[RMDB]
An RNA of 177 nucleotides, treated with 2A3 and DMS and read out base by base. The data come from the RNA Mapping Database (RMDB), library TTRDEL. For 2A3 the reverse transcriptase was SuperScript II with manganese. For DMS, 22,471 sequencing reads were counted. The 2A3 profile rests on 49,537 reads.
RNA sequence: GGGAACGACUCGAGUAGAGUCGAAAAGAUAUGGAUUAAGUCUCCGAUAAGCGUAUAUCGGAAACGAUAUGACGCUUUUGACGGAGUCACAUCCUAAGUCAAACGGUACUUCUUCGGAAGUACCGAACACUACAGUAUGGUUCGCCAUACUGUAGUGAAAAGAAACAACAACAACAAC
Reactivity to 2A3 in 0.01 (KOAc 150mM, MgCl2 10mM, bicine 150mM(pH8.5), 24C), signal-to-noise 9, nucleotides 027 to 126: g020a000u060a030u130g000g010a010u040u060a250a170g030u020c000u000c010c010g100a150u060a240a000g000c000g010u010a010u000a000u010c010g010g040a030a020a000c010g000a000u000a000u030g300a050c010g000c000u020u020u040u110g230a120c030g000g000a000g000u010c000a010c030a030u000c010c000u030a110a020g040u040c060a110a070a090c020g010g000u010a000c000u000u010c000u030u070c280g120g010a010a000g000u000a000c000c000g000a010a000
Reactivity to DMS in 0.01 (KOAc 150mM, MgCl2 10mM, bicine 150mM(pH8.5), 24C), signal-to-noise 9, nucleotides 027 to 126: g010a040u000a210u010g000g000a010u000u000a150a160g010u000c000u000c000c000g020a130u000a020a020g020c010g020u010a030u000a000u000c010g010g000a060a030a090c000g010a020u000a010u000g010a020c000g010c000u000u000u000u000g010a200c110g000g000a030g010u000c060a090c290a040u000c000c000u000a060a150g000u000c020a090a090a240c020g000g000u000a010c000u000u000c000u000u010c220g030g000a010a010g000u000a000c000c000g010a010a060